[RMDB]
RNA sequence: GGGAACGACUCGAGUAGAGUCGAAAACGAGGGUUAGCCGAUCCUAAGGCCCGUCGUAAUUCGAGCGGGUCAAAAGGGAAACUGGUUAAUAUUCCAGUGCCACCGUACAUUGAAAGUCGACGCCUCGACGCCUCUUUACAUUCGUGUAAAGAGGCGUAAAAGAAACAACAACAACAAC
Reactivity to 2A3 in 0.01 (KOAc 150mM, MgCl2 10mM, bicine 150mM(pH8.5), 24C), signal-to-noise 5, nucleotides 027 to 126: c010g010a030g020g060g030u060u110a020g020c020c010g020a050u060c000c010u040a090a070g000g000c020c010c000g020u060c010g020u110a130a170u190u260c020g000a030g060c000g000g010g030u000c020a080a080a040a060g020g000g010a070a080a010c000u030g010g000u050u060a100a040u130a160u170u050c020c000a010g010u020g080c030c040a070c020c010g040u100a040c040a150u090u220g080a140a050a000g040u030c020g000a020c020g060c020c010u030c010g000
Reactivity to DMS in 0.01 (KOAc 150mM, MgCl2 10mM, bicine 150mM(pH8.5), 24C), signal-to-noise 3, nucleotides 027 to 126: c070g010a050g000g020g000u000u000a070g020c010c020g030a080u000c000c020u030a220a220g000g010c000c040c000g020u000c000g020u010a130a180u020u010c020g030a090g000c000g000g000g030u040c030a000a050a120a110g000g020g000a020a130a050c020u010g010g010u020u010a070a040u020a070u020u000c000c000a030g010u010g000c140c040a160c080c070g010u000a130c150a080u000u000g010a040a100a060g010u020c020g010a050c110g030c030c000u000c020g010